RNA sequence: GGGAACGACUCGAGUAGAGUCGAAAAGCACAACUUUGCAGGGCAAGCCUAUUGGUAUGUUCUUCCCUUAUGACAUCGAACUUGUCACAGGAAAGCAAAAUAUUCUCCUGCGCAAGUAUGGCCGUGGCACAUCGUACUGGUUCGCCAGUACGAUGUGAAAAGAAACAACAACAACAAC
Reactivity to DMS in 0.01 (KOAc 150mM, MgCl2 10mM, bicine 150mM(pH8.5), 24C), signal-to-noise 3, nucleotides 027 to 126: g010c090a020c100a030a070c110u000u000u000g020c030a070g030g000g020c110a080a300g010c010c040u010a060u000u000g030g010u000a060u000g010u010u000c100u000u000c010c000c030u000u010a120u000g000a020c030a000u000c200g000a120a060c070u010u010g010u000c030a040c110a030g000g020a030a040a030g000c300a050a060a100a170u010a100u000u010c070u000c000c000u000g010c080g020c050a010a010g010u000a070u000g010g010c070c070g000u010g030g020
Reactivity to 2A3 in 0.01 (KOAc 150mM, MgCl2 10mM, bicine 150mM(pH8.5), 24C), signal-to-noise 3, nucleotides 027 to 126: g010c030a020c020a140a140c100u100u170u120g020c030a010g010g010g010c020a030a040g030c010c000u140a180u140u200g000g000u050a060u120g000u050u000c000u010u030c010c000c000u040u080a160u060g040a020c020a050u040c060g070a020a060c030u000u050g060u120c030a010c010a050g020g010a030a000a040g060c110a070a010a180a030u210a080u060u080c060u000c010c000u010g000c000g000c010a010a010g010u020a110u040g060g000c030c020g020u080g050g030